[RMDB]
RNA sequence: GGGAACGACUCGAGUAGAGUCGAAAAGAUAUGGAGCUACUUGUCAGCUCGUGUGAGCGUCCAAUGAUCGGAAACGAUCAUAAAGGACGCCCACGAGCUUGGAUUUAGUAGCUCCUAAGUCAAAACACUCCAAUGACGUUCGCGUCAUUGGAGUGAACUAGGGAACAUACUUCGGUAUGUUCCCUAGAAAAGAAACAACAACAACAAC
Reactivity to 2A3 in 0.01 (KOAc 150mM, MgCl2 10mM, bicine 150mM(pH8.5), 24C), signal-to-noise 2, nucleotides 027 to 156: g020a020u070a070u140g010g000a000g000c000u000a000c010u000u000g000u000c000a000g000c020u010c050g010u010g040u080g030a300g010c000g000u000c000c010a040a000u010g000a000u000c000g010g010a090a190a030c040g000a010u010c000a000u050a000a110a030g000g010a010c030g000c030c050c000a030c010g000a000g000c010u010u060g020g000a010u150u230u200a000g000u000a000g000c000u000c000c000u000a000a000g010u000c000a000a000a020a050c010a010c000u000c000c010a000a000u000g000a000c010g030u080u060c280g040c020g170u030c000a000u010u000g000g000a000g000u000g000a000a000